[RMDB]
RNA sequence: GGGAACGACUCGAGUAGAGUCGAAAAGAUAUGGAACAUCUCUAGCGUGAGCGAAGAACGUGAGAUAGCUGAUAUGGUCGGAAACGACCAUAUCCGAAACACGGGAGCUUCGGGUGUUCCUAAGUCAGCCUAAAUACAUGUUCGCAUGUAUUUAGGCAAAAGAAACAACAACAACAAC
Reactivity to DMS in 0.01 (KOAc 150mM, MgCl2 10mM, bicine 150mM(pH8.5), 24C), signal-to-noise 3, nucleotides 027 to 126: g000a010u000a060u040g000g010a020a020c010a020u000c020u030c290u000a150g040c090g010u010g010a040g030c030g020a110a160g020a160a240c020g010u000g000a080g020a160u000a130g010c120u000g010a040u010a010u000g000g010u000c010g000g020a000a030a020c010g030a020c010c000a000u010a000u000c000c060g010a170a180a170c000a010c000g000g000g000a040g000c000u000u000c030g010g000g020u000g000u000u000c010c000u020a000a070g000u000c020a150
Reactivity to 2A3 in 0.01 (KOAc 150mM, MgCl2 10mM, bicine 150mM(pH8.5), 24C), signal-to-noise 3, nucleotides 027 to 126: g000a010u010a010u050g000g000a010a020c020a000u050c120u090c190u300a140g120c060g270u300g120a020g040c010g080a300a000g010a020a010c020g000u000g000a080g050a300u270a160g120c050u000g000a000u000a000u020g000g000u020c010g000g000a000a000a000c000g000a000c010c000a000u010a000u000c000c010g000a000a000a010c000a000c000g000g020g000a010g000c000u040u050c000g020g000g000u000g000u010u010c000c000u000a000a000g010u000c050a050
The record gives the reactivity of an RNA of 177 nucleotides to DMS and 2A3. For DMS the reverse transcriptase was MarathonRT. The reactions ran in a buffer of 150 mM KOAc, 10 mM MgCl2 and 150 mM bicine (pH 8.5), at 24 C. The DMS profile rests on 2,955 reads.